Chemical mapping of a 177-nucleotide RNA with 2A3 and DMS.
For 2A3 the reverse transcriptase was SuperScript II with manganese.
DMS adducts were read by reverse transcription with MarathonRT.
The DMS profile rests on 1,679 reads.
[RMDB]
RNA sequence: GGGAACGACUCGAGUAGAGUCGAAAAGACGAGCAGGCUGAUAAUCUUGUGCAGUAUGCAUGCUCGUAACUCCAGCGCACAAGUGGAAGCACAAGAUUUCAAUCCAGCAUAGCGCAGGAGCCGCAGAAUAGUCAUGGCGAUUCGUCGCCAUGACUAUAAAAGAAACAACAACAACAAC
Reactivity to 2A3 in 0.01 (KOAc 150mM, MgCl2 10mM, bicine 150mM(pH8.5), 24C), signal-to-noise 2, nucleotides 027 to 126: g050a010c000g000a000g030c000a000g000g000c000u000g060a170u040a110a030u020c010u020u040g010u000g020c000a010g070u100a010u070g040c020a000u020g000c000u000c000g000u030a000a000c010u030c000c000a030g040c020g010c000a020c020a300a040g080u070g090g050a080a000g000c000a000c000a010a000g000a020u070u090u120c120a130a090u020c040c000a000g000c040a140u140a100g000c000g000c010a030g000g000a000g040c020c000g060c030a010g140a250
Reactivity to DMS in 0.01 (KOAc 150mM, MgCl2 10mM, bicine 150mM(pH8.5), 24C), signal-to-noise 2, nucleotides 027 to 126: g000a030c000g000a070g000c000a010g000g000c000u070g000a090u010a040a040u000c020u000u030g000u000g030c000a270g000u010a050u010g020c010a050u000g000c010u050c000g000u000a010a180c000u020c000c000a040g000c000g000c000a240c300a150a160g030u050g010g060a050a090g000c000a020c000a000a000g000a130u010u000u050c160a010a130u020c030c010a000g000c090a230u020a150g000c050g070c000a020g040g040a000g020c020c140g000c300a100g000a100